RNA sequence: GGGAACGACUCGAGUAGAGUCGAAAACCACCACUAUUACGGCCAUCACAAGAAAAUUCAUGCAAGUGGAAACGGUGAUAGUAGCAGCUGGUAUGACACGUUGGUAGCAGUAGCGGUGGUAAUGCCGUGUUCCAUCACGUUUCGACGUGAUGGAACAAAAAGAAACAACAACAACAAC
Reactivity to DMS in 0.01 (KOAc 150mM, MgCl2 10mM, bicine 150mM(pH8.5), 24C), signal-to-noise 3, nucleotides 027 to 126: c020c000a120c030c010a060c040u000a010u000u010a050c030g040g050c000c020a000u000c040a110c170a150a150g020a120a040a070a070u020u000c030a010u000g000c070a070a050g000u000g000g010a140a120a070c010g040g030u030g030a150u000a100g000u000a050g030c080a180g010c010u000g000g010u010a010u010g000a040c300a070c140g010u000u010g030g000u000a130g030c030a020g010u010a010g000c030g020g000u000g000g010u000a070a030u020g000c000c030g000
Reactivity to 2A3 in 0.01 (KOAc 150mM, MgCl2 10mM, bicine 150mM(pH8.5), 24C), signal-to-noise 3, nucleotides 027 to 126: c000c000a000c010c000a010c010u040a010u050u100a020c050g050g000c020c010a010u030c040a030c020a100a090g150a160a170a080a040u130u050c000a000u060g000c010a030a010g020u050g060g000a050a080a050c010g050g130u130g080a110u100a120g070u030a030g060c080a000g000c020u020g010g000u040a020u040g030a010c000a000c200g020u030u020g010g010u010a020g040c030a000g010u020a010g010c010g000g000u000g000g010u020a020a000u140g020c020c010g030
An RNA of 177 nucleotides, treated with DMS and 2A3 and read out base by base.
Conditions: 150 mM KOAc, 10 mM MgCl2 and 150 mM bicine (pH 8.5), 24 C.
2A3 adducts were read by reverse transcription with SuperScript II with manganese.